The record gives the reactivity of an RNA of 177 nucleotides to 2A3.
For 2A3 the reverse transcriptase was SuperScript II with manganese.
The reactions ran in a buffer of 150 mM KOAc, 10 mM MgCl2 and 150 mM bicine (pH 8.5), at 24 C.

RNA sequence: GGGAACGACUCGAGUAGAGUCGAAAAGCUCGUUCAUCCUGGUGCCCGGCAUCGACGUUCCGUUCCACUCGCGGGUGCUGCGGGUUGGUGUCGCGGAGUUCCGCCGUUCGCUGGACCGCGUGAUGCCCAUGACGAUGCCCUUCGGGGCAUCGUCAUGAAAAGAAACAACAACAACAAC
Reactivity to 2A3 in 0.01 (KOAc 150mM, MgCl2 10mM, bicine 150mM(pH8.5), 24C), signal-to-noise 2, nucleotides 027 to 126: g020c010u010c060g030u120u030c030a100u100c000c000u130g090g000u130g030c020c010c000g000g020c020a030u000c050g040a070c050g030u070u180c040c000g000u040u000c060c000a020c060u000c010g090c000g070g080g060u060g060c080u140g040c000g000g030g000u060u120g040g070u070g000u000c020g000c010g050g000a080g000u120u020c000c160g010c000c000g110u150u080c070g000c000u070g030g030a030c020c010g050c000g050u070g000a020u080g010c020c100